An RNA of 177 nucleotides, treated with 2A3 and DMS and read out base by base.
The RNA was probed in 150 mM KOAc, 10 mM MgCl2 and 150 mM bicine (pH 8.5) at 24 C.
The DMS profile rests on 12,778 reads.
The 2A3 profile rests on 39,604 reads.
RNA sequence: GGGAACGACUCGAGUAGAGUCGAAAAGAUAUGGAGCGAAUAGGGAGAACGCCCAUCGGAAACGAUGGGAUGUUCAUCGAUCUAUCCGCUCCUAAGUCAAAGUUCCUUGUGUUCGCACAAGGAACAAGGCUAAUAAGUAGUUCGCUACUUAUUAGCCAAAAGAAACAACAACAACAAC
Reactivity to 2A3 in 0.01 (KOAc 150mM, MgCl2 10mM, bicine 150mM(pH8.5), 24C), signal-to-noise 3, nucleotides 027 to 126: g000a000u000a000u050g000g000a000g010c010g010a030a010u000a010g010g020g010a040g000a010a000c000g020c000c000c000a000u010c000g000g000a000a000a000c010g000a000u010g020g030g000a010u020g010u000u000c000a030u300c020g000a000u010c010u000a000u010c010c020g000c000u000c000c000u000a000a000g000u000c000a010a050a100g000u000u000c000c000u000u010g020u000g010u020u110c300g070c140a000c000a000a020g000g010a010a000c000a000a050
Reactivity to DMS in 0.01 (KOAc 150mM, MgCl2 10mM, bicine 150mM(pH8.5), 24C), signal-to-noise 5, nucleotides 027 to 126: g000a010u000a010u010g000g000a010g030c000g010a020a000u000a010g010g010g000a010g020a020a000c000g000c000c000c010a000u000c000g010g000a010a010a010c010g000a020u000g000g010g000a000u000g030u000u010c000a300u010c220g000a020u010c000u000a000u000c010c000g020c000u000c000c000u010a000a050g000u000c000a100a140a140g010u000u000c000c000u000u010g020u000g010u000u010c300g030c010a000c010a010a010g000g000a000a000c000a060a070